[RMDB]
RNA sequence: GGGAACGACUCGAGUAGAGUCGAAAAGAUAUGGAGAAUAAGAAGCUCUUGGAUUUACACAGAAAUCUCUAUUCUCGGAAACGAGAAUAGAGACACUGUGUUGUCAGAGCCACUAUUCUCCUAAGUCCACUAAUUAUUUCUUCGGAAAUAAUUAGUGAAAAGAAACAACAACAACAAC
Reactivity to DMS in 0.01 (KOAc 150mM, MgCl2 10mM, bicine 150mM(pH8.5), 24C), signal-to-noise 2, nucleotides 027 to 126: g000a130u000a300u000g000g020a030g010a000a010u020a030a060g000a300a300g010c010u000c000u010u030g030g030a020u010u000u000a000c000a000c000a030g010a110a100a300u000c000u000c000u000a000u000u000c000u020c000g000g000a090a110a140c000g010a010g010a000a000u010a010g000a010g000a000c190a090c000u000g010u000g010u000u010g000u020c000a040g000a010g020c000c020a240c170u010a020u000u000c010u000c000c000u000a020a090g000u000c040
Reactivity to 2A3 in 0.01 (KOAc 150mM, MgCl2 10mM, bicine 150mM(pH8.5), 24C), signal-to-noise 3, nucleotides 027 to 126: g030a060u140a060u250g010g000a050g020a000a030u080a110a120g230a140a030g060c000u020c040u230u300g110g020a110u300u300u300a020c010a000c010a000g120a280a300a220u020c000u040c000u000a020u000u030c010u020c020g000g040a080a140a040c020g000a010g010a010a010u010a000g000a000g000a000c000a000c010u010g000u000g000u020u000g000u000c020a000g000a000g010c000c010a010c020u030a000u000u000c000u040c000c000u000a040a000g020u070c000